[RMDB]
RNA sequence: GGGAACGACUCGAGUAGAGUCGAAAACAGCAAUCUCUCAUCCUGAUAUCCGUGUGGGUGAUGUGUUGCUCUAUGUGAAUGGAAUCGCAGUCGAAGGAAAAGUACAUCAGGAGGUGGUGGCGAUGCAUAUCCUCCGUGAUUUCGAUCACGGAGGAUAAAAAGAAACAACAACAACAAC
Reactivity to 2A3 in 0.01 (KOAc 150mM, MgCl2 10mM, bicine 150mM(pH8.5), 24C), signal-to-noise 1, nucleotides 027 to 126: c020a000g070c000a030a040u100c060u030c000u000c030a060u020c000c010u050g090a060u080a140u200c050c070g080u070g020u120g080g000g090u000g040a080u060g000u020g000u120u010g030c030u000c030u030a100u070g090u060g080a110a120u140g020g020a040a060u050c060g030c010a000g110u130c020g040a050a140g020g050a050a100a070a050g110u040a020c020a060u110c000a020g000g030a030g070g000u000g000g000u020g040g040c050g030a030u040g000c000a050
Reactivity to DMS in 0.01 (KOAc 150mM, MgCl2 10mM, bicine 150mM(pH8.5), 24C), signal-to-noise 2, nucleotides 027 to 126: c160a030g000c020a030a060u000c070u010c060u010c030a060u000c030c010u000g020a090u000a150u010c100c080g020u000g020u010g010g020g040u000g010a020u010g010u000g020u020u000g000c050u000c100u000a040u010g040u020g050a070a070u000g010g010a080a120u000c060g000c060a030g000u010c080g000a090a080g020g000a040a090a050a090g030u000a010c080a050u000c100a070g020g000a040g000g010u010g010g030u000g010g010c060g020a020u000g020c110a110